[RMDB]
RNA sequence: GGGAACGACUCGAGUAGAGUCGAAAAGAAGACGUGACGAAAAGUCACGAAAAGAGCUGUUAGGUACCAACAGCAAAGAAAAGGUACCAAGACGGAAACGUCAGACAUCGGAGACGAUGUCAAAAGAAAAAUUAUAAUGGUUCGCCAUUAUAAUUUUAAAAGAAACAACAACAACAAC
Reactivity to DMS in 0.01 (KOAc 150mM, MgCl2 10mM, bicine 150mM(pH8.5), 24C), signal-to-noise 6, nucleotides 027 to 126: g010a190a130g020a170c020g000u010g000a000c000g000a120a090a120a180g000u000c000a000c010g000a050a050a140a090g010a150g000c000u000g010u000u000a090g010g000u000a000c010c000a020a010c010a000g010c010a080a100a090g000a050a020a050a140g000g000u000a000c000c000a160a110g000a000c010g000g020a090a100a120c000g030u000c000a160g000a000c000a010u000c000g000g010a170g000a180c010g010a010u000g020u010c010a050a050a080a100g000a020
Reactivity to 2A3 in 0.01 (KOAc 150mM, MgCl2 10mM, bicine 150mM(pH8.5), 24C), signal-to-noise 7, nucleotides 027 to 126: g160a050a020g130a040c010g000u000g000a000c010g080a120a140a060a120g000u000c000a000c000g020a010a020a000a000g120a030g000c000u000g000u020u020a060g000g000u000a000c000c010a020a030c020a010g040c130a070a040a000g130a010a040a000a010g000g000u000a000c000c000a010a030g000a000c010g020g030a060a060a000c010g010u010c000a000g000a000c000a000u000c000g040g020a060g040a100c010g000a010u010g000u000c000a010a030a020a020g090a010
Background:
The record gives the reactivity of an RNA of 177 nucleotides to DMS and 2A3. The DMS profile rests on 11,013 reads. For 2A3 the reverse transcriptase was SuperScript II with manganese.